About this RNA:
Source: RMDB library 15KLIB, as collected in RNAgym. The record gives the reactivity of an RNA of 170 nucleotides to 2A3 and DMS. For 2A3, 5,864 sequencing reads were counted. 2A3 adducts were read by reverse transcription with SuperScript II with manganese. For DMS the reverse transcriptase was MarathonRT. For DMS, 11,555 sequencing reads were counted.
[RMDB]
RNA sequence: GGGAACGACUCGAGUAGAGUCGAAAACGGAGUCUACCUCCAUCUGGUCCGUCCGGGCCCUCUUCGCCGGAGGCGCCCCCUCCCCGUCCUUAUCCUUCUUUCCAAGUAUUCCUUUGAUGUUUCCCAGUAGGCCCAUGCUUCGGCAUGGGCAAAAGAAACAACAACAACAAC
Reactivity to 2A3 in 0.01 (KOAc 150mM, MgCl2 10mM, bicine 150mM(pH8.5), 24C), signal-to-noise 3, nucleotides 027 to 129: c010g020g000a020g040u000c060u070a080c030c000u020c000c010a000u030c040u010g010g030u040c010c010g030u000c020c070g010g000g020c000c010c000u060c030u140u090c050g120c080c000g050g000a000g000g000c070g010c000c000c030c010c000u020c030c000c000c010g060u050c000c010u040u060a070u010c000c000u020u020c000u010u010u000c000c010a070a000g050u050a100u100u040c000c010u030u060u090g030a050u090g040u040u090u000c000c000c000a030g060u110a000g050
Reactivity to DMS in 0.01 (KOAc 150mM, MgCl2 10mM, bicine 150mM(pH8.5), 24C), signal-to-noise 2, nucleotides 027 to 129: c120g050g050a000g030u020c070u010a000c100c000u040c030c020a110u040c100u030g000g000u030c030c050g040u000c060c130g040g010g050c030c010c040u020c040u030u030c280g090c170c000g040g000a000g030g040c170g000c060c030c040c040c000u030c000c000c000c000g010u000c030c000u010u010a100u030c040c030u030u010c040u010u010u000c020c020a110a120g000u050a140u010u030c000c020u000u000u000g010a070u040g040u070u010u020c000c020c010a170g040u070a100g010